[RMDB]
RNA sequence: GGGAACGACUCGAGUAGAGUCGAAAAAGAAAAGAGGUGUCGAGUGAGCUGGGCCUUGCUGGACUAUUUUGGUAGUCAGAAAUUCUCUAAAGAUAAAGGACCACAUUCUUGAAAGGCAUAAGAAGUGAGAGUCGUACUGAUUCGUCAGUACGACUCUAAAAGAAACAACAACAACAAC
Reactivity to DMS in 0.01 (KOAc 150mM, MgCl2 10mM, bicine 150mM(pH8.5), 24C), signal-to-noise 1, nucleotides 027 to 126: a080g010a110a010a110a070g000a100g010g000u000g030u000c040g000a100g040u000g000a050g000c200u010g020g010g060c010c010u000u010g030c050u010g010g000a020c010u010a010u000u000u040u020g050g020u000a030g000u000c040a080g000a100a120a140u020u000c010u000c090u030a070a130a080g000a140u000a070a050a060g020g010a030c050c000a090c050a160u000u000c010u000u000g000a120a100a100g000g010c090a100u010a060a030g010a070a030g010u010g000